RNA sequence: GGGAACGACUCGAGUAGAGUCGAAAAGAUAUGGAUGGAGCCUCCUAUGGAGGAGCUCGGAAACGAGCUCUACCCACCCAUAAGGAGGCGUUGAAAUCCUAAGUCAAAAGGGGCGUUCGCGCCCCAAGUGUAUAUUAGGGUUCGCCCUAAUAUACACAAAAGAAACAACAACAACAAC
Reactivity to 2A3 in 0.01 (KOAc 150mM, MgCl2 10mM, bicine 150mM(pH8.5), 24C), signal-to-noise 2, nucleotides 027 to 126: g020a020u080a030u160g000g000a000u020g030g040a010g020c000c000u000c000c010u000a020u010g010g010a020g000g020a000g010c010u010c030g000g010a030a080a030c010g000a000g000c000u010c000u010a060c000c020c000a030c010c010c000a000u010a030a100g020g010a010g000g000c010g000u050u020g000a020a030a000u000c000c010u020a100a050g070u080c040a010a010a080a130g020g010g000g000c010g020u060u080c180g010c000g000c080c000c020c000a000a000
Reactivity to DMS in 0.01 (KOAc 150mM, MgCl2 10mM, bicine 150mM(pH8.5), 24C), signal-to-noise 6, nucleotides 027 to 126: g000a040u010a250u000g000g010a010u000g010g000a210g020c020c000u000c010c000u000a020u000g020g000a150g010g000a010g000c000u000c000g000g000a070a100a160c010g010a010g000c000u000c000u000a070c030c040c080a300c110c000c000a000u000a050a080g030g000a020g030g010c000g000u000u020g000a080a120a070u000c000c000u000a040a130g000u010c040a050a080a140a140g010g000g010g000c000g030u000u010c190g020c020g020c000c000c000c000a000a010
Chemical mapping of a 177-nucleotide RNA with 2A3 and DMS. For DMS, 6,112 sequencing reads were counted. Reactivities are given for positions 27 through 126. The 2A3 profile rests on 8,637 reads.